Notes
The record gives the reactivity of an RNA of 170 nucleotides to 2A3 and DMS. Values cover nucleotides 27 to 129. The DMS profile rests on 6,090 reads.

RNA sequence: GGGAACGACUCGAGUAGAGUCGAAAAACUCGACUUAUCGUCCCCACAUAGCAGUUUCCAGGACCCCCUUCCAAAAAGACUGAGGGGGGUGGCUAGGACGCAGGGGACCAGUGGAGCCGUGGGAUGCAAGCCGCCUACUUCGGUAGGCGGAAAAGAAACAACAACAACAAC
Reactivity to 2A3 in 0.01 (KOAc 150mM, MgCl2 10mM, bicine 150mM(pH8.5), 24C), signal-to-noise 3, nucleotides 027 to 129: a000c030u020c000g030a010c020u070u040a050u200c080g020u000c020c000c020c000a080c030a030u180a030g000c090a010g000u080u080u000c000c020a000g030g000a020c010c000c020c000c000u010u000c040c000a150a070a010a080a010g120a070c210u190g000a030g000g020g000g010g000g010u000g010g020c010u050a080g000g000a020c000g030c030a000g090g010g000g000a010c010c030a010g000u030g010g000a000g010c030c010g030u040g020g020g020a030u090g070c020a010a050g030
Reactivity to DMS in 0.01 (KOAc 150mM, MgCl2 10mM, bicine 150mM(pH8.5), 24C), signal-to-noise 2, nucleotides 027 to 129: a030c020u010c030g000a080c020u020u050a070u010c200g120u020c000c000c010c070a080c140a220u080a010g010c120a090g020u000u120u000c000c000a040g000g000a080c000c000c000c000c000u040u020c040c100a080a080a050a080a070g010a090c130u000g010a040g040g020g000g020g000g030u010g010g050c010u040a000g030g010a060c060g060c030a060g000g000g000g000a030c030c010a020g020u030g000g020a090g050c050c030g000u050g000g000g000a080u050g040c000a160a030g020